Conditions: 150 mM KOAc, 10 mM MgCl2 and 150 mM bicine (pH 8.5), 24 C. The record gives the reactivity of an RNA of 177 nucleotides to 2A3 and DMS. For DMS, 9,432 sequencing reads were counted. For DMS the reverse transcriptase was MarathonRT.

RNA sequence: GGGAACGACUCGAGUAGAGUCGAAAAUGUGUGCGCCGUGUGCGGAUAGCUUGCUAUGCGUGUGUGGUUGUGUGUGGAUUGAUGUGGGUUUUAACUUGUUGCCGUUCGGGACGUUGACGAAAUGGAGCUUUGCAAUUAAGUUCGCUUAAUUGCAAAGAAAAGAAACAACAACAACAAC
Reactivity to 2A3 in 0.01 (KOAc 150mM, MgCl2 10mM, bicine 150mM(pH8.5), 24C), signal-to-noise 3, nucleotides 027 to 126: u140g030u010g010u030g030c030g000c010c040g060u040g010u030g060c020g010g040a040u030a040g020c050u030u120g000c000u050a040u100g080c020g000u080g010u020g010u010g010g050u130u040g040u010g010u020g010u040g060g030a080u030u130g030a050u050g050u060g020g050g000u040u060u030u090a060a050c030u020u060g020u060u060g050c030c040g010u040u050c010g000g010g050a030c020g030u040u060g030a040c040g030a020a020a090u100g020g000a010g000
Reactivity to DMS in 0.01 (KOAc 150mM, MgCl2 10mM, bicine 150mM(pH8.5), 24C), signal-to-noise 4, nucleotides 027 to 126: u010g010u000g020u010g020c070g020c020c040g040u000g020u010g010c040g010g000a060u000a040g020c040u000u000g010c040u010a040u010g010c040g030u010g000u010g030u000g010g000u000u000g020u010g020u000g010u000g000g000a100u000u000g010a070u000g020u000g000g010g010u000u000u000u000a050a110c120u000u000g010u010u000g010c040c020g000u000u010c070g000g010g010a070c080g010u000u000g010a080c100g000a050a080a080u010g010g000a120g010